[RMDB]
An RNA of 177 nucleotides, treated with DMS and read out base by base. Source: RMDB library OK2TRN, as collected in RNAgym. For DMS the reverse transcriptase was MarathonRT. The DMS profile rests on 1,105 reads. The RNA was probed in 150 mM KOAc, 10 mM MgCl2 and 150 mM bicine (pH 8.5) at 24 C.
RNA sequence: GGGAACGACUCGAGUAGAGUCGAAAAAGCACGACGUCGAGACGGCCACGGUAGCCGCCGAACCCAGCAGGGUCGCCAACGUGCCCAACGCCGCCUCCAGGUCGGUGCGCCAGACGUUGCGCCCGUCAUCGGGCAGAGCAUUCGUGCUCUGCCCGAUAAAAGAAACAACAACAACAAC
Reactivity to DMS in 0.01 (KOAc 150mM, MgCl2 10mM, bicine 150mM(pH8.5), 24C), signal-to-noise 2, nucleotides 027 to 126: a100g000c020a010c000g010a000c060g010u020c300g000a040g000a080c060g010g020c010c060a030c300g000g010u000a100g000c040c070g000c080c000g000a080a090c020c000c010a270g040c300a150g000g030g000u000c020g040c060c050a050a070c030g000u000g010c020c010c000a050a300c290g010c000c030g000c020c010u000c030c060a090g010g020u000c010g020g050u010g010c000g010c030c020a100g020a050c080g000u000u000g020c110g020c090c000c000g000u000c170